[RMDB]
RNA sequence: GGGAACGACUCGAGUAGAGUCGAAAAUACUACUCUUCCUUCAUUUGAUAUGAGAAUAUUAUGAGGUUUUAUAUCUCUAUGUAUAAUCCCCUUUUUGUGCGCUGCACUAAGUGCCAUAGCUAUUUGUAUAAUACUCGGAGUUCGCUCCGAGUAUUAUAAAAGAAACAACAACAACAAC
Reactivity to DMS in 0.01 (KOAc 150mM, MgCl2 10mM, bicine 150mM(pH8.5), 24C), signal-to-noise 2, nucleotides 027 to 126: u000a030c010u000a020c030u000c060u010u000c020c060u030u020c020a040u010u040u030g000a110u010a020u000g000a030g000a070a030u010a070u030u010a110u010g040a010g000g010u000u020u040u050a060u020a000u000c010u020c010u050a100u090g000u000a060u010a100a170u030c010c010c000c090u000u040u000u030u020g000u040g000c050g000c080u000g000c100a030c130u000a080a040g000u000g030c020c230a020u000a050g000c110u000a150u000u010u020g000u000
Reactivity to 2A3 in 0.01 (KOAc 150mM, MgCl2 10mM, bicine 150mM(pH8.5), 24C), signal-to-noise 4, nucleotides 027 to 126: u120a000c000u020a020c000u000c000u090u060c030c000u080u080c020a080u040u080u280g130a090u120a040u160g080a080g010a070a090u080a080u230u120a120u160g000a010g070g000u000u040u110u110a170u100a030u050c000u000c030u030a060u150g090u010a050u030a100a060u020c030c000c010c000u000u060u030u130u110g090u100g020c110g020c100u050g010c030a030c130u070a150a000g030u010g060c020c020a090u030a010g040c070u060a140u110u140u050g130u000
An RNA of 177 nucleotides, treated with DMS and 2A3 and read out base by base. DMS adducts were read by reverse transcription with MarathonRT. Values cover nucleotides 27 to 126. The 2A3 profile rests on 1,314 reads.